[RMDB]
RNA sequence: GGGAACGACUCGAGUAGAGUCGAAAAAGAAAAGCGUAACAGCUUACCGGCCGAGGUUCGAGGCGCCCAAAAUGAUCGGGGCUCAAGUUCGCCACCGAGACCUAACGGCACGGGUAACACCGUGAUCGAAUAUCAAUUAGUUCGCUAAUUGAUAUUCAAAAGAAACAACAACAACAAC
Reactivity to DMS in 0.01 (KOAc 150mM, MgCl2 10mM, bicine 150mM(pH8.5), 24C), signal-to-noise 6, nucleotides 027 to 126: a120g010a070a080a030a040g030c010g010u000a110a130c160a210g000c010u000u000a080c150c020g010g000c010c000g000a160g020g000u010u000c010g010a110g010g020c060g010c020c010c010a050a050a090a080u000g010a110u000c070g020g000g010g000c060u000c140a070a090g000u000u000c140g010c020c010a120c050c020g000a050g010a090c070c060u010a090a100c100g000g010c000a020c000g000g000g000u000a070a110c140a180c010c000g020u000g000a080u010c100
Reactivity to 2A3 in 0.01 (KOAc 150mM, MgCl2 10mM, bicine 150mM(pH8.5), 24C), signal-to-noise 5, nucleotides 027 to 126: a010g180a010a110a010a010g010c020g010u050a060a010c020a050g010c000u020u020a040c030c000g030g000c010c010g050a070g000g100u050u040c010g010a020g020g010c020g070c010c010c010a040a070a010a080u260g030a100u070c050g020g000g010g000c030u040c120a110a090g080u140u120c040g020c020c030a180c050c000g020a030g030a070c010c010u080a140a050c040g040g000c040a020c020g000g000g000u020a020a020c030a020c010c000g020u010g020a100u130c090

Source: RMDB library RFMREP, as collected in RNAgym. Structure probing data (DMS and 2A3) for a 177-nucleotide construct. Values are in units of 0.01, from 0 to 300, in steps of 10. For DMS the reverse transcriptase was MarathonRT. The DMS profile rests on 6,244 reads. For 2A3, 10,672 sequencing reads were counted. The RNA was probed in 150 mM KOAc, 10 mM MgCl2 and 150 mM bicine (pH 8.5) at 24 C.